Notes:
The record gives the reactivity of an RNA of 177 nucleotides to DMS and 2A3. For DMS, 8,047 sequencing reads were counted. Reactivities are rounded to 0.1 and cut off at 0 and 3. Values cover nucleotides 27 to 126. Source: RMDB library M2PK90, as collected in RNAgym.
[RMDB]
RNA sequence: GGGAACGACUCGAGUAGAGUCGAAAAUAACAUUCUCUAUUUCGACUAGGCAAAUUUUGAGAGGCCCGAACCCGCUGCAAUAUUGAGCGUAGGAUGGAUGGAUGACCCGGGUCGGCAGCGCGGAUAAUAAGUACGUUUUAUUCGUAAAACGUACUUAAAAAGAAACAACAACAACAAC
Reactivity to DMS in 0.01 (KOAc 150mM, MgCl2 10mM, bicine 150mM(pH8.5), 24C), signal-to-noise 6, nucleotides 027 to 126: u010a100a150c100a110u000u010c040u010c030u000a100u000u000u000c040g020a080c050u000a070g010g010c050a080a080a100u000u000u000u000g010a130g010a190g000g000c030c030c050g010a070a110c060c020c020g010c040u000g010c040a060a070u000a070u000u010g000a110g000c040g010u000a050g000g010a060u000g000g000a060u010g010g000a070u000g010a100c040c020c030g020g000g020u000c040g010g010c020a020g020c030g010c100g010g000a090u000a030a110
Reactivity to 2A3 in 0.01 (KOAc 150mM, MgCl2 10mM, bicine 150mM(pH8.5), 24C), signal-to-noise 3, nucleotides 027 to 126: u080a030a010c030a070u140u040c020u010c010u010a090u030u080u050c040g040a040c030u040a050g110g000c050a080a140a160u110u150u130u140g120a160g010a050g030g060c010c010c000g030a060a020c020c010c020g000c050u070g030c010a050a110u080a090u300u180g050a070g030c070g070u060a040g080g020a040u040g030g000a010u080g020g020a010u060g000a020c000c030c000g010g000g000u030c050g000g000c000a010g000c030g030c060g010g000a010u030a180a090